An RNA of 177 nucleotides, treated with 2A3 and DMS and read out base by base. 2A3 adducts were read by reverse transcription with SuperScript II with manganese. Reactivities are given for positions 27 through 126. In probing experiments dimethyl sulfate is read out at A N1 and C N3, which are open when not base-paired.
RNA sequence: GGGAACGACUCGAGUAGAGUCGAAAAGUGCGAGGUCGAGGGUAGCUUACGAUCUUUGCAGUGGAACAUGAGACCUGUAACCAUGAUCCACUAGGUCUCAAACGUAGGACAAAGAUACCUCGCUGAAGAUACUGUAGCAUUUCGAUGUUACAGUAUCAAAAGAAACAACAACAACAAC
Reactivity to 2A3 in 0.01 (KOAc 150mM, MgCl2 10mM, bicine 150mM(pH8.5), 24C), signal-to-noise 9, nucleotides 027 to 126: g190u120g000c000g000a000g000g010u050c040g060a120g040g140g070u120a050g040c000u020u020a010c020g060a090u080c010u050u030u060g020c010a010g000u010g010g000a020a000c000a010u060g020a080g110a300c040c140u190g120u170a040a010c020c000a020u030g020a060u000c000c000a000c010u020a050g090g050u030c020u000c000a030a050a010c020g010u010a010g000g020a040c030a040a110a010g040a030u070a030c000c000u000c000g000c010u020g020a050a020
Reactivity to DMS in 0.01 (KOAc 150mM, MgCl2 10mM, bicine 150mM(pH8.5), 24C), signal-to-noise 9, nucleotides 027 to 126: g020u020g010c010g000a020g010g010u010c060g020a150g010g010g020u030a130g010c030u000u010a030c030g010a090u020c090u010u010u010g010c100a040g010u000g000g010a030a070c030a030u000g000a100g010a090c090c090u020g010u030a100a140c090c020a030u000g000a070u010c020c010a010c010u000a040g010g000u020c050u020c060a030a060a100c050g000u000a020g000g000a100c050a100a090a080g000a100u020a040c010c000u000c010g010c000u010g000a130a100